[RMDB]
Description: The record gives the reactivity of an RNA of 177 nucleotides to DMS and 2A3. The 2A3 profile rests on 90,425 reads. For 2A3 the reverse transcriptase was SuperScript II with manganese. Source: RMDB library OK1LIB, as collected in RNAgym.
RNA sequence: GGGAACGACUCGAGUAGAGUCGAAAAUCAAUAGUAGAGUCUAUACGAUGUAGAUAUUCUACUAGGAGUAUCGAGAAUUCGUAUAGCUUGAUUCUCGUCAGUCAGAGAGACAUACUCUUUGACUGAAGAUAGUAAGCUUAUUCGUAGGUUUACUAUCAAAAGAAACAACAACAACAAC
Reactivity to DMS in 0.01 (KOAc 150mM, MgCl2 10mM, bicine 150mM(pH8.5), 24C), signal-to-noise 9, nucleotides 027 to 126: u030c120a090a100u040a090g010u020a180g000a020g000u040c000u000a000u000a020c030g000a030u010g010u010a140g000a000u000a010u000u000c000u000a130c280u040a120g010g010a030g030u000a010u000c010g000a200g010a140a060u010u000c020g010u000a010u000a020g000c020u000u000g010a100u010u000c010u000c030g010u010c000a000g010u000c000a010g010a000g000a010g000a210c300a130u030a150c000u000c000u010u000u000g000a010c000u000g000a010a030
Reactivity to 2A3 in 0.01 (KOAc 150mM, MgCl2 10mM, bicine 150mM(pH8.5), 24C), signal-to-noise 9, nucleotides 027 to 126: u110c030a030a110u060a080g060u030a010g010a000g070u050c010u010a000u000a010c010g010a010u040g030u030a030g000a010u010a010u010u010c020u070a300c070u080a140g100g000a000g010u010a000u010c020g010a030g200a190a140u070u010c000g000u010a010u000a010g000c000u000u030g000a000u020u000c020u000c010g040u020c000a000g000u000c000a000g000a000g000a000g030a060c030a100u300a220c020u000c000u000u000u000g000a000c000u000g000a000a000